[RMDB]
RNA sequence: GGGAACGACUCGAGUAGAGUCGAAAAACGCAUGAGGUACGCCUCAUGCGAUACUCUAUGCAAGUAGGCAUAGGGGAAGAGGAUUGUUGUCAACACCUCCAGGAUUAUUCUUGUGAGUUGUGGAUAACGUGAAGGCUACUUUCGAGUAGCCUUCACGAAAAGAAACAACAACAACAAC
Reactivity to 2A3 in 0.01 (KOAc 150mM, MgCl2 10mM, bicine 150mM(pH8.5), 24C), signal-to-noise 1, nucleotides 027 to 126: a000c030g000c000a000u000g000a010g130g060u020a120c300g080c010c000u000c000a000u000g010c000g000a000u000a000c000u020c000u000a010u000g000c030a050a250g160u150a070g300g000c000a000u020a030g030g020g000g000a000a100g030a010g110g090a100u000u200g040u000u000g010u030c100a090a090c000a030c010c000u060c000c000a000g000g000a010u030u160a200u300u050c010u000u040g020u040g100a010g000u040u100g000u050g010g100a020u080a100a030